Structure probing data (2A3 and DMS) for a 177-nucleotide construct. Source: RMDB library TTRDEL, as collected in RNAgym. For DMS, 7,801 sequencing reads were counted. The RNA was probed in 150 mM KOAc, 10 mM MgCl2 and 150 mM bicine (pH 8.5) at 24 C. For DMS the reverse transcriptase was MarathonRT. Values cover nucleotides 27 to 126.
RNA sequence: GGGAACGACUCGAGUAGAGUCGAAAAGAUAUGGACGAGUCGCAGGCUACCAUGUCGGAAACGACAUGGGUCAGCCUGACCCGACGAUGAGUCCUAAGUCAAAGAGAUCACCUUCGGGUGAUCUCAACUAUCAUGUACACUUCGGUGUACAUGAUAGAAAAGAAACAACAACAACAAC
Reactivity to 2A3 in 0.01 (KOAc 150mM, MgCl2 10mM, bicine 150mM(pH8.5), 24C), signal-to-noise 4, nucleotides 027 to 126: g020a020u070a060u150g000g000a010c010g020a020g000u010c010g000c090a000g000g010c000u010a030c000c000a000u010g000u010c010g010g030a030a070a040c020g010a000c000a000u010g020g020g000u050c020a000g010c000c000u000g000a010c000c010c010g030a040c020g030a060u100g040a000g000u020c000c000u030a180a020g060u060c050a090a090a070g010a000g000a000u000c000a000c010c000u060u100c300g110g000g000u000g000a000u000c000u000c000a000a000
Reactivity to DMS in 0.01 (KOAc 150mM, MgCl2 10mM, bicine 150mM(pH8.5), 24C), signal-to-noise 5, nucleotides 027 to 126: g010a070u010a300u010g000g020a020c000g000a300g010u000c000g010c010a010g000g010c000u000a130c000c000a010u000g010u000c000g010g000a080a080a190c000g010a000c000a010u000g000g000g010u010c170a010g010c000c000u000g000a050c060c090c070g010a300c010g000a030u000g020a300g010u000c000c000u000a030a100g000u000c050a110a100a110g000a010g000a020u000c000a000c000c000u000u010c230g020g000g020u000g010a000u000c010u000c010a030a080